RNA sequence: GGGAACGACUCGAGUAGAGUCGAAAACAUCAAUACAUUGCAUGAUUAAUCGGGCAAAGUGUGCAAUUAUAUCUUUGUUAACAACCACGGUUUUCAUUUGGGGCUAGCAGUUCUAUAAUGAGACGCAUAUGAUCAUAGAGUUCGCUCUAUGAUCAUAAAAAGAAACAACAACAACAAC
Reactivity to 2A3 in 0.01 (KOAc 150mM, MgCl2 10mM, bicine 150mM(pH8.5), 24C), signal-to-noise 6, nucleotides 027 to 126: c020a020u090c040a040a040u050a070c040a040u010u040g020c000a010u020g020a060u230u150a160a100u140c060g030g030g000c050a060a060a040g080u080g000u010g020c010a020a020u090u030a070u040a020u070c040u030u060u030g010u060u060a080a050c040a040a030c020c020a040c070g080g020u030u050u060u040c010a000u010u030u040g000g000g010g010c000u020a050g050c040a020g010u020u030c020u020a080u070a180a030u040g030a010g000a010c020g000c050a040
Reactivity to DMS in 0.01 (KOAc 150mM, MgCl2 10mM, bicine 150mM(pH8.5), 24C), signal-to-noise 7, nucleotides 027 to 126: c030a040u000c070a050a030u000a050c190a040u000u000g010c010a040u000g010a080u000u000a090a090u010c060g010g020g020c060a090a090a080g020u010g010u000g000c010a020a020u000u000a090u000a030u000c060u000u000u010g000u000u000a080a100c150a070a140c030c040a090c190g010g010u000u000u010u000c020a020u000u000u000g010g010g000g000c020u000a090g010c110a160g030u000u000c010u000a030u020a020a020u010g000a040g000a030c050g010c220a090